[RMDB]
RNA sequence: GGGAACGACUCGAGUAGAGUCGAAAAGUAAAGGCGGAGGAGGGUUUUGGCUUGCGCUCGGUCCGCCCGCGCGUGGUGUGGGCUGGAAUUCGUGUGUGGUGGAUGAUUAAUGCCGCGCGCCCAGGAAGUAUAAGAAUCUCUUCGGAGAUUCUUAUACAAAAGAAACAACAACAACAAC
Reactivity to 2A3 in 0.01 (KOAc 150mM, MgCl2 10mM, bicine 150mM(pH8.5), 24C), signal-to-noise 2, nucleotides 027 to 126: g050u050a050a090a090g060g000c030g040g040a060g030g020a020g030g050g000u040u090u090u080g100g020c060u050u080g020c120g010c010u000c010g020g090u010c010c000g000c000c010c000g010c010g000c010g050u080g030g060u090g020u080g040g010g040c050u080g030g100a090a070u160u100c040g010u040g000u000g000u040g060g070u030g030g040a040u030g000a020u120u270a110a030u090g000c010c000g000c000g010c010g000c000c020c000a020g060g040a170a060
Reactivity to DMS in 0.01 (KOAc 150mM, MgCl2 10mM, bicine 150mM(pH8.5), 24C), signal-to-noise 4, nucleotides 027 to 126: g000u010a070a100a120g000g010c040g010g020a080g010g010a100g010g000g010u010u000u010u010g010g010c110u000u000g020c050g000c020u000c020g000g000u000c020c030g000c010c010c050g020c050g010c050g010u000g020g020u000g020u000g000g000g010c030u010g030g000a090a100u000u000c060g020u000g010u000g010u010g020g020u000g000g000a080u010g000a100u010u010a050a060u010g000c000c020g020c040g010c050g010c010c040c020a110g010g000a070a120
The record gives the reactivity of an RNA of 177 nucleotides to 2A3 and DMS. Reactivities are rounded to 0.1 and cut off at 0 and 3. For 2A3 the reverse transcriptase was SuperScript II with manganese. The reactions ran in a buffer of 150 mM KOAc, 10 mM MgCl2 and 150 mM bicine (pH 8.5), at 24 C.